Structure probing data (DMS and 2A3) for a 207-nucleotide construct.
For DMS the reverse transcriptase was MarathonRT.
Conditions: 150 mM KOAc, 10 mM MgCl2 and 150 mM bicine (pH 8.5), 24 C.
It was measured as part of the RMDB library M2RFPK.
[RMDB]
RNA sequence: GGGAACGACUCGAGUAGAGUCGAAAAGAACUUUGGCCGGCUCGGAAUAGAAUCAGGUGGUGCAAACUGCCCACUGGCAGAAAGGAUUAUAGCAAAUGCGUACCCUAUUGCAAUACAGCCCGGCCAACAUAGACUACUCUAUUCGUAGAGUAGUCAAUACUAAGACGAGUUUCGACUCGUCUUAGUAAAAAGAAACAACAACAACAAC
Reactivity to DMS in 0.01 (KOAc 150mM, MgCl2 10mM, bicine 150mM(pH8.5), 24C), signal-to-noise 2, nucleotides 027 to 156: g000a080a100c050u000u000u010g000g070c000c010g010g000c050u000c080g030g000a090a160u000a060g000a130a050u000c060a130g000g020u000g020g020u000g020c090a080a050a170c090u000g020c020c010c060a050c090u000g020g010c030a060g010a150a110a080g000g020a080u000u000a040u000a170g020c050a070a080a110u020g020c040g000u000a100c030c010c010u000a100u000u000g000c070a090a100u000a060c070a050g000c120c020c020g040g000c010c030a000a030c110a080u010a140g000a040c000u000a010c000u000c000u000a050u000u010c300g040u000a020g000a010g010u000a010g010u000c000a020a090
Reactivity to 2A3 in 0.01 (KOAc 150mM, MgCl2 10mM, bicine 150mM(pH8.5), 24C), signal-to-noise 4, nucleotides 027 to 156: g020a060a030c040u050u010u020g000g000c010c010g010g020c030u050c130g050g040a040a050u080a100g070a100a090u120c060a070g020g020u020g010g040u200g030c040a220a180a090c080u110g000c000c010c010a040c080u070g040g000c020a010g090a020a080a030g050g000a050u120u140a100u220a100g020c010a090a140a110u150g000c040g020u050a060c000c000c000u050a080u030u080g040c000a070a070u040a170c020a020g020c030c040c000g000g040c010c000a000a000c000a020u050a010g000a000c000u000a000c000u010c000u000a040u060u040c100g070u060a000g000a000g010u000a000g000u010c000a000a000